[RMDB]
RNA sequence: GGGAACGACUCGAGUAGAGUCGAAAAAGCACUGGUACGAUACGUCGUACCAGUGCAGUCGUUGGGAUGGAACGCAAUUAAAUACAUGUGUGACGUGUAUUUGCGAGCGACGUAAUUAUUUUUCAAAAUCACGCUAUCGUGUUCGCACGAUAGCGAACGAAAUUAUGCAGUUCGCUGCAUAAUUUCGAAAAGAAACAACAACAACAAC
Reactivity to 2A3 in 0.01 (KOAc 150mM, MgCl2 10mM, bicine 150mM(pH8.5), 24C), signal-to-noise 2, nucleotides 027 to 156: a000g020c000a000c000u020g000g020u010a000c010g000a000u020a050c300g120u010c000g000u000a000c000c020a000g010u000g000c000a000g000u010c010g070u110u120g100g030g020a130u130g040g090a170a040c000g000c010a030a000u190u110a120a100a020u000a000c000a000u040g060u030g160u200g250a080c010g010u010g020u020a020u020u060u030g000c030g030a010g010c030g030a030c040g040u070a040a130u180u060a050u050u130u010u010u120c070a040a090a030a080u130c040a010c040g010c000u010a020u010c000g000u010g000u050u030c140g000c050a000c000g000a000u000a000g020c000g000a020a000
Reactivity to DMS in 0.01 (KOAc 150mM, MgCl2 10mM, bicine 150mM(pH8.5), 24C), signal-to-noise 1, nucleotides 027 to 156: a090g020c010a000c010u010g000g040u010a000c010g010a030u000a070c300g070u000c000g010u000a010c010c100a030g010u010g030c000a000g000u000c000g040u000u010g010g010g000a150u000g030g000a100a080c030g020c030a020a270u000u000a040a070a040u000a020c000a000u000g010u000g000u020g000a060c030g050u010g000u000a000u030u000u000g010c090g010a200g040c010g000a090c070g010u000a050a070u000u000a190u000u000u000u030u000c090a040a050a050a150u000c090a180c020g040c000u010a000u010c010g170u010g020u000u000c300g020c000a050c000g000a030u000a010g010c000g090a000a020